[RMDB]
RNA sequence: GGGAACGACUCGAGUAGAGUCGAAAAGAUAUGGAGUCUCUGAGCGCACAACAGCUAGCUCGGAAACGAGCUAGACAUGUGCCCAGAGGACUCCUAAGUCAAACAAUCCAACUUCGGUUGGAUUGAAGUGUAGUUAGAGGUUCGCCUCUAACUACACAAAAGAAACAACAACAACAAC
Reactivity to 2A3 in 0.01 (KOAc 150mM, MgCl2 10mM, bicine 150mM(pH8.5), 24C), signal-to-noise 4, nucleotides 027 to 126: g030a000u090a040u200g000g010a010g010u010c010u000c000u020g140a160g170c180g030c070a020c010a050a260c030a090g060c000u000a000g010c000u020c010g020g010a060a050a030c010g010a000g000c000u010a010g050a020c010a070u060g010u020g020c010c010c000a010g030a070g060g050a010c000u000c000c000u000a080a000g050u030c050a050a050a160c000a020a000u000c000c010a010a010c010u090u130c300g190g010u010u010g000g020a010u010u020g020a120a020
Reactivity to DMS in 0.01 (KOAc 150mM, MgCl2 10mM, bicine 150mM(pH8.5), 24C), signal-to-noise 4, nucleotides 027 to 126: g000a060u000a300u010g010g000a030g000u000c010u010c000u000g000a080g010c150g000c070a050c110a100a140c270a180g010c000u000a000g000c000u000c000g040g010a080a060a150c000g000a010g000c000u000a000g000a030c080a090u000g010u000g000c000c020c000a010g010a050g020g000a020c000u000c000c000u000a010a110g010u000c030a150a100a300c010a000a010u000c010c000a000a010c000u010u020c230g040g030u010u000g010g000a010u000u000g020a040a100
An RNA of 177 nucleotides, treated with 2A3 and DMS and read out base by base. The RNA was probed in 150 mM KOAc, 10 mM MgCl2 and 150 mM bicine (pH 8.5) at 24 C. For 2A3 the reverse transcriptase was SuperScript II with manganese. Source: RMDB library TTRDES, as collected in RNAgym.